[RMDB]
RNA sequence: GGGAACGACUCGAGUAGAGUCGAAAAUCGCGGUGACAUCUGUGGCUUGGAUGCGGGCACAUUGGCUGGCCGAUGGGAUCAGCAUCAAGACAAGCAGCAUCUACAGCAUCUGGCCGCAGACAGUGGCACCCUGCUUUAGCUUCGGCUAAAGCAGGGUAAAAGAAACAACAACAACAAC
Reactivity to 2A3 in 0.01 (KOAc 150mM, MgCl2 10mM, bicine 150mM(pH8.5), 24C), signal-to-noise 1, nucleotides 027 to 126: u050c010g010c060g120g060u130g060a050c000a030u060c000u030g020u030g000g050c040u020u250g070g030a020u000g040c000g030g070g060c030a070c010a150u000u050g050g020c040u010g000g060c050c020g170a220u150g120g040g000a180u050c020a020g000c000a050u150c050a060a000g140a090c070a060a050g070c050a050g000c010a040u070c020u150a050c030a030g000c000a000u030c000u090g030g000c010c000g000c000a000g000a010c000a040g020u040g040g000c040
Reactivity to DMS in 0.01 (KOAc 150mM, MgCl2 10mM, bicine 150mM(pH8.5), 24C), signal-to-noise 1, nucleotides 027 to 126: u000c030g000c040g000g000u000g000a070c040a240u000c010u010g030u000g000g010c000u010u000g070g010a000u010g010c010g010g040g040c000a130c040a080u000u000g030g000c030u000g010g010c050c010g000a090u000g000g010g000a170u000c050a090g010c000a070u010c190a110a130g020a150c210a040a080g000c030a150g000c080a090u000c030u030a030c040a220g020c010a000u000c020u000g010g020c010c000g020c000a030g000a010c160a060g020u000g000g030c040